This 207-nucleotide RNA was probed chemically with 2A3 and DMS. High DMS reactivity at an A or C suggests that its Watson-Crick edge is free. It was measured as part of the RMDB library M2RFPK. The 2A3 profile rests on 1,838 reads. 2A3 adducts were read by reverse transcription with SuperScript II with manganese.

RNA sequence: GGGAACGACUCGAGUAGAGUCGAAAAUAAGCACCUCGUUAGGUGAGGCGGCUACACGAACAUAGGCCUCUGACCCCGAACGUCGAGAGACGCCCCGGGUCAGGACAGCUCUUCCCGGCUUAAGGGUAAAAUCACAACGUCUUCGGACGUUGUGAAACCCUAUAAUACACUUCGGUGUAUUAUAGGGAAAAGAAACAACAACAACAAC
Reactivity to 2A3 in 0.01 (KOAc 150mM, MgCl2 10mM, bicine 150mM(pH8.5), 24C), signal-to-noise 3, nucleotides 027 to 156: u180a020a020g010c010a020c000c020u000c040g080u110u300a110g030g140u190g100a010g000g050c060g060g000c050u110a060c080a040c100g190a290a010c050a100u190a110g080g060c000c000u000c010u000g000a020c010c000c020c020g070a070a030c010g000u020c000g030a000g000a010g000a150c000g010c010c040c020c020g030g000g010u010c010a000g000g030a010c020a010g000c000u000c000u040u040c000c000c000g000g030c060u100u120a080a090g070g000g010u060a050a060a060a120u020c000a000c000a000a000c000g000u000c000u020u030c080g090g010a000c020g000u010u000g000u000g000a000a000a000
Reactivity to DMS in 0.01 (KOAc 150mM, MgCl2 10mM, bicine 150mM(pH8.5), 24C), signal-to-noise 1, nucleotides 027 to 156: u000a120a110g020c030a020c010c010u000c000g010u020u010a200g030g000u000g010a070g020g000c090g030g010c010u000a030c090a160c120g000a030a040c090a150u000a190g020g050c010c020u000c000u030g000a070c000c000c040c060g010a070a070c030g010u000c000g000a300g000a300g000a070c000g040c010c020c070c080g030g000g020u000c030a000g000g020a030c030a130g020c000u000c020u000u000c010c030c040g010g010c050u000u020a070a050g010g030g070u010a010a090a060a150u000c000a020c000a000a030c010g010u010c030u000u000c300g040g000a030c000g000u000u000g030u000g030a000a000a030